RNA sequence: GGGAACGACUCGAGUAGAGUCGAAAAGAUAUGGAGGUAUGAACUACAAAGGUAGUCCAUCGAUCUCGGAAACGAGGGAGGACAAACUUUGCAUACCUCCUAAGUCAAAGCUCACUUCGGUGAGCAAUCUACGAGAUCACUUCGGUGAUCUCGUAGAAAAAGAAACAACAACAACAAC
Reactivity to DMS in 0.01 (KOAc 150mM, MgCl2 10mM, bicine 150mM(pH8.5), 24C), signal-to-noise 1, nucleotides 027 to 126: g000a080u000a300u060g000g040a000g020g040u000a000u000g000a140a020c190u010a300c000a010a030a050g000g000u000a300g000u000c000c000a180u000c290g030a100u050c000u050c000g000g000a080a060a110c010g000a050g000g020g000a000g000g050a000c000a000a060a170c000u000u000u000g000c010a040u000a000c000c000u000c000c000u000a000a070g010u000c020a030a190a120g000c000u000c000a040c000u000u000c110g020g000u000g000a000g040c010a010a000
Reactivity to 2A3 in 0.01 (KOAc 150mM, MgCl2 10mM, bicine 150mM(pH8.5), 24C), signal-to-noise 1, nucleotides 027 to 126: g020a060u110a050u210g010g000a000g010g010u000a020u030g010a070a100c060u090a030c300a030a030a000g110g000u040a030g030u030c010c000a120u300c020g060a040u020c020u030c020g010g080a050a110a000c000g000a010g050g020g000a020g000g000a000c000a040a300a020c000u000u030u000g030c010a000u010a030c010c000u000c000c000u000a010a010g020u000c020a000a040a040g010c000u030c020a030c020u070u100c170g130g000u000g010a000g020c000a000a010
Chemical mapping of a 177-nucleotide RNA with DMS and 2A3. For DMS the reverse transcriptase was MarathonRT. For 2A3 the reverse transcriptase was SuperScript II with manganese. It was measured as part of the RMDB library TTRDEL. As a SHAPE reagent, 2A3 marks flexible, mostly unpaired nucleotides at the ribose 2'-OH.